The record gives the reactivity of an RNA of 177 nucleotides to DMS. The RNA was probed in 150 mM KOAc, 10 mM MgCl2 and 150 mM bicine (pH 8.5) at 24 C. It was measured as part of the RMDB library TTRDEL. Values cover nucleotides 27 to 126.
RNA sequence: GGGAACGACUCGAGUAGAGUCGAAAAGAUAUGGAGGAUAGGAACUACUCUCCCGUGUCGGAAACGACACCCGAGAGCUAGUAUCCUCCUAAGUCAAAAGAGGCUACAUGUUCGCAUGUAGCCUCAAGACUAUGUGCACCUUCGGGUGCACAUAGUCAAAAGAAACAACAACAACAAC
Reactivity to DMS in 0.01 (KOAc 150mM, MgCl2 10mM, bicine 150mM(pH8.5), 24C), signal-to-noise 1, nucleotides 027 to 126: g000a040u000a300u000g000g010a000g000g010a050u010a190g010g010a170a210c000u000a030c000u000c010u000c000c020c200g010u000g000u000c000g030g000a190a080a280c040g000a000c000a020c010c000c190g000a020g020a000g000c120u000a060g020u000a080u000c000c000u060c000c000u000a000a120g020u010c000a040a110a070a140g000a010g050g000c000u000a000c000a010u000g000u040u000c210g020c060a010u000g000u000a000g000c000c000u000c000a000a010